[RMDB]
RNA sequence: GGGAACGACUCGAGUAGAGUCGAAAAGACAACGAUAGUGACAAUGAUCUAUCACUUGAUGAUUUUUGAUCAGCGAUCAACUCACUCAGCAAUCAACAACAUCAAUAAAACAGACAUCAAUCCAUUGCUUUACGCACUGAUUCGUCAGUGCGUAAAGAAAAGAAACAACAACAACAAC
Reactivity to 2A3 in 0.01 (KOAc 150mM, MgCl2 10mM, bicine 150mM(pH8.5), 24C), signal-to-noise 3, nucleotides 027 to 126: g030a010c020a060a020c100g020a070u020a080g080u050g020a020c030a100a160u100g010a040u030c010u010a030u050c020a010c040u070u130g010a050u030g050a120u100u000u030u040u150g050a060u000c060a020g000c020g020a020u060c010a040a110c060u030c090a040c030u080c030a050g000c020a020a060u030c000a020a020c000a000a020c000a050u050c010a030a060u110a150a110a010a020c030a010g080a060c010a040u100c050a030a080u000c040c030a060u080u120g040
Reactivity to DMS in 0.01 (KOAc 150mM, MgCl2 10mM, bicine 150mM(pH8.5), 24C), signal-to-noise 3, nucleotides 027 to 126: g010a090c060a060a070c130g000a060u010a030g010u000g000a300c080a070a120u000g020a070u000c000u000a030u000c040a130c150u000u020g000a050u010g000a140u000u000u000u010u000g000a030u010c000a100g020c130g000a080u000c060a020a120c130u000c060a030c110u000c030a120g030c050a100a010u000c020a020a030c030a000a010c000a050u000c020a060a020u000a080a030a090a060c090a030g010a060c140a000u010c080a060a090u010c040c070a090u010u010g020